An RNA of 177 nucleotides, treated with 2A3 and DMS and read out base by base. The RNA was probed in 150 mM KOAc, 10 mM MgCl2 and 150 mM bicine (pH 8.5) at 24 C.
RNA sequence: GGGAACGACUCGAGUAGAGUCGAAAAAGCACCGAAAAUAUGUAAAGGACUUGUCAUGUCACUGAAGUCAGGUGACAUCAAGAAGGGCAGUUGUGGUGCCCGUCAAGGCCUGCUGACUUUCCUGGAGGGAUUGAGACUUAUUCGUAAGUCUCAAUCCAAAAGAAACAACAACAACAAC
Reactivity to 2A3 in 0.01 (KOAc 150mM, MgCl2 10mM, bicine 150mM(pH8.5), 24C), signal-to-noise 4, nucleotides 027 to 126: a020g050c040a050c040c020g070a050a030a080a070u270a060u120g080u160a070a120a090g050g020a040c000u030u000g030u050c040a010u020g010u000c000a010c020u050g110a180a070g240u220c110a040g010g030u030g020a000c010a000u030c030a000a070g080a040a040g010g000g000c000a060g010u190u160g160u190g120g140u040g010c000c010c000g020u020c020a030a010g000g000c000c020u040g000c010u010g020a070c000u020u040u020c010c000u050g040g100a120g030
Reactivity to DMS in 0.01 (KOAc 150mM, MgCl2 10mM, bicine 150mM(pH8.5), 24C), signal-to-noise 5, nucleotides 027 to 126: a070g000c070a090c070c030g000a110a080a110a080u010a080u000g000u010a090a120a080g000g000a100c010u000u000g000u010c110a030u000g000u000c000a000c000u010g000a140a120g000u020c160a130g000g000u000g000a010c000a010u000c090a060a070g000a100a080g010g000g010c010a050g010u000u010g000u010g030g010u000g000c010c010c010g010u000c040a050a050g000g000c050c020u000g010c060u000g010a080c140u000u000u000c020c010u010g020g010a190g020